Annotation
An RNA of 177 nucleotides, treated with DMS and 2A3 and read out base by base. Reactivities are given for positions 27 through 126. High DMS reactivity at an A or C suggests that its Watson-Crick edge is free.

[RMDB]
RNA sequence: GGGAACGACUCGAGUAGAGUCGAAAAUCAUUGCAAGUGGUACAUCUAUCUCAGGUUCUAUACAUAUAGGAAACUCUUGCGAUGUAUUUAUAGCAAAUGCAAUAGGAAAGGCUUUAAGAGAAUUAGGCAUUUAGUGCUGCUUCGGCAGCACUAAAUGAAAAGAAACAACAACAACAAC
Reactivity to DMS in 0.01 (KOAc 150mM, MgCl2 10mM, bicine 150mM(pH8.5), 24C), signal-to-noise 3, nucleotides 027 to 126: u000c000a000u000u000g020c000a000a080g000u030g000g000u040a100c260a050u030c000u000a040u020c100u060c280a060g000g000u000u000c100u010a060u040a120c070a110u010a060u000a010g000g020a180a030a090c110u010c040u000u000g000c000g000a010u000g000u050a000u020u000u020a080u010a100g000c090a070a060a070u020g010c070a080a050u010a060g020g030a080a040a090g020g010c010u000u000u000a050a040g000a060g020a110a100u080u050a060g010g040
Reactivity to 2A3 in 0.01 (KOAc 150mM, MgCl2 10mM, bicine 150mM(pH8.5), 24C), signal-to-noise 4, nucleotides 027 to 126: u100c000a000u010u030g000c010a010a000g050u030g150g050u170a090c060a090u040c010u060a060u080c030u030c180a020g020g100u090u030c070u060a080u020a120c080a070u120a010u040a070g060g020a000a170a000c010u020c010u030u000g000c000g020a000u000g010u030a050u000u110u010a100u040a070g020c010a030a110a090u110g000c020a040a080u070a190g050g110a070a090a020g070g000c010u040u100u170a100a050g070a040g050a210a120u130u110a080g080g070